[RMDB]
RNA sequence: GGGAACGACUCGAGUAGAGUCGAAAAGGCUACCGGUGGCUGAGGCUGUUGGGCUAUGAGCCGGAGCAGAUCGUGCUAGCGGGCGAUUCCGCGGGCGGGUAUCUUGCGCUCGCUCUCGCGCAGCGGCCACGUGGACGUAGUUCGCUACGUCCACGUGAAAAGAAACAACAACAACAAC
Reactivity to 2A3 in 0.01 (KOAc 150mM, MgCl2 10mM, bicine 150mM(pH8.5), 24C), signal-to-noise 2, nucleotides 027 to 126: g040g040c020u070a060c050c100g120g070u080g060g000c010u070g070a070g070g000c000u020g050u100u050g030g090g000c000u030a080u150g020a020g040c010c100g040g010a000g010c000a000g000a010u140c150g160u100g050c010u040a050g000c070g010g060g000c090g220a160u300u020c040c030g010c010g010g000g000c050g030g000g040u160a050u070c070u080u190g030c010g010c030u000c020g000c010u000c040u050c010g000c010g020c010a010g000c040g000g000c000
Reactivity to DMS in 0.01 (KOAc 150mM, MgCl2 10mM, bicine 150mM(pH8.5), 24C), signal-to-noise 2, nucleotides 027 to 126: g000g010c020u000a100c050c020g020g010u000g000g010c030u000g000a150g020g020c020u010g010u020u010g000g010g020c020u000a070u000g000a070g020c010c090g000g010a080g020c000a060g000a040u010c010g000u010g010c020u010a140g020c000g010g010g000c160g010a170u020u010c020c010g020c010g000g020g010c010g010g010g000u000a020u010c010u000u000g020c000g010c020u000c300g010c010u000c020u010c250g000c020g020c020a010g000c010g000g000c010